RNA sequence: GGGAACGACUCGAGUAGAGUCGAAAAGGAGGCGAAAUGGCACUUAAUAAACUUUCGCAACCAGUGCCACAUCCAUCUGAAUUGAUUAAACCCGCCACUGCAUGCGGGCCUGAUAUAGGAGUGGAGAUGUUCCUUAUGCAUUCGUGCAUAAGGAACAAAAAGAAACAACAACAACAAC
Reactivity to 2A3 in 0.01 (KOAc 150mM, MgCl2 10mM, bicine 150mM(pH8.5), 24C), signal-to-noise 2, nucleotides 027 to 126: g050g010a030g000g010c040g010a070a000a030u160g060g020c130a040c150u100u090a070a050u120a140a260a010c030u060u080u050c020g000c020a020a040c010c020a020g060u040g110c000c000a030c040a090u040c010c010a000u000c040u030g180a240a160u100u080g030a050u040u140a060a050a030c020c000c010g030c040c030a190c140u150g010c030a130u130g020c020g000g000g000c000c000u020g010a010u020a000u040a080g060g020a040g080u030g020g030a070g000a060
Reactivity to DMS in 0.01 (KOAc 150mM, MgCl2 10mM, bicine 150mM(pH8.5), 24C), signal-to-noise 3, nucleotides 027 to 126: g020g020a110g010g010c030g010a020a010a070u000g000g030c120a040c150u000u010a110a140u010a130a140a140c070u000u000u000c060g050c040a050a070c030c010a080g010u000g020c030c010a070c200a090u000c010c000a050u010c040u000g000a150a250u000u000g020a110u000u010a050a090a120c000c000c010g010c000c140a120c180u010g000c240a150u020g030c020g020g000g020c070c060u000g000a040u000a040u000a160g000g000a070g010u000g000g000a030g020a100